[RMDB]
RNA sequence: GGGAACGACUCGAGUAGAGUCGAAAACUCCGCACUCCGGUCCGCUUAGCACGGAGUCCGAGAGUGGCAGAGCUCCGUAAAUUCGGAGUUCGCUAUUCGACCACAUGCUCGGAAGGAGGAGAUCAUGUGGGACCGUAAGAUUCGUCUUACGGUCCCAAAAAGAAACAACAACAACAAC
Reactivity to 2A3 in 0.01 (KOAc 150mM, MgCl2 10mM, bicine 150mM(pH8.5), 24C), signal-to-noise 1, nucleotides 027 to 126: c000u000c000c020g030c000a060c000u000c000c000g080g000u040c000c000g070c220u110u290a000g010c000a000c040g080g000a010g050u000c000c040g050a030g000a050g000u000g000g000c000a000g000a000g000c000u000c000c000g000u000a110a110a110u260u000c020g000g000a000g000u000u000c020g070c030u040a130u130u220c090g100a240c040c000a000c000a170u300g010c000u000c000g000g080a000a150g000g080a000g000g030a060g000a070u200c110a030u060g020
Reactivity to DMS in 0.01 (KOAc 150mM, MgCl2 10mM, bicine 150mM(pH8.5), 24C), signal-to-noise 1, nucleotides 027 to 126: c030u020c000c000g000c050a300c000u000c030c000g040g000u010c000c070g030c030u000u070a070g050c080a240c000g010g000a020g000u000c000c030g000a080g000a080g140u000g020g000c000a090g040a000g000c000u000c000c000g000u080a190a230a300u000u070c000g000g000a000g000u000u000c010g030c220u000a000u000u030c300g000a110c010c000a000c000a120u060g000c010u000c000g000g000a100a170g000g000a050g000g000a200g000a100u000c240a060u010g000